[RMDB]
RNA sequence: GGGAACGACUCGAGUAGAGUCGAAAAGAGCUAAUAUCUACUUCGUUUGUGCAUAUCACUAUAGGGAAGCUGAUGGGUUGCGAGAAAUCGCAGUGCCUAGUGGAAUGAACGGCUCCGUUCAAGCGAAGGGAUUAGUAUUCUUCGGAAUACUAAUCCCAAAAGAAACAACAACAACAAC
Reactivity to DMS in 0.01 (KOAc 150mM, MgCl2 10mM, bicine 150mM(pH8.5), 24C), signal-to-noise 5, nucleotides 027 to 126: g020a100g000c060u020a080a080u030a100u020c040u010a140c060u000u000c050g000u000u010u030g010u000g000c100a060u010a090u030c060a060c080u000a090u020a060g000g010g010a100a060g000c050u000g020a110u020g000g000g010u010u000g000c000g000a020g000a070a080a130u000c020g000c000a030g000u010g020c010c020u000a050g000u000g010g010a090a110u020g010a080a120c080g000g000c040u010c040c040g010u000u010c040a030a050g000c100g020a080a110
Reactivity to 2A3 in 0.01 (KOAc 150mM, MgCl2 10mM, bicine 150mM(pH8.5), 24C), signal-to-noise 9, nucleotides 027 to 126: g070a010g040c130u140a060a040u080a130u150c050u080a090c010u030u010c000g050u010u030u030g020u010g020c040a030u070a050u220c060a040c090u090a040u140a160g070g030g040a100a020g010c010u020g010a060u080g010g030g000u060u010g000c010g000a010g030a050a060a030u030c010g000c010a020g020u100g160c000c000u020a020g030u040g090g110a140a130u080g030a070a020c020g030g000c010u000c020c010g020u060u060c020a040a020g010c010g020a040a050

This 177-nucleotide RNA was probed chemically with DMS and 2A3. For DMS the reverse transcriptase was MarathonRT. Reactivities are given for positions 27 through 126. The reactions ran in a buffer of 150 mM KOAc, 10 mM MgCl2 and 150 mM bicine (pH 8.5), at 24 C. It was measured as part of the RMDB library OK1LIB.